Chemical mapping of a 177-nucleotide RNA with DMS. The RNA was probed in 150 mM KOAc, 10 mM MgCl2 and 150 mM bicine (pH 8.5) at 24 C. For DMS the reverse transcriptase was MarathonRT. Reactivities are given for positions 27 through 126.
[RMDB]
RNA sequence: GGGAACGACUCGAGUAGAGUCGAAAAGAUAUGGACCGAUUGCGAGGUUUGACGAAUCCCUCCUCAGUAUUCGGAAACGAAUACUGAGGAGGGACUAUCAAACUACCCACCGCAGCGGUCCUAAGUCGUUCAUCAAGCUGUUCGCAGCUUGAUGAACAAAAGAAACAACAACAACAAC
Reactivity to DMS in 0.01 (KOAc 150mM, MgCl2 10mM, bicine 150mM(pH8.5), 24C), signal-to-noise 1, nucleotides 027 to 126: g000a090u030a300u000g000g010a000c000c020g000a120u020u000g080c000g000a060g000g010u000u020u000g010a000c090g020a100a240u000c000c000c000u000c000c000u000c000a010g000u010a000u000u000c000g010g000a080a130a190c000g020a020a000u010a040c000u000g000a000g020g000a010g000g000g000a000c060u000a130u000c010a030a020a000c010u000a010c060c050c110a300c160c020g000c000a020g020c000g000g000u000c000c000u000a020a120g040u000c110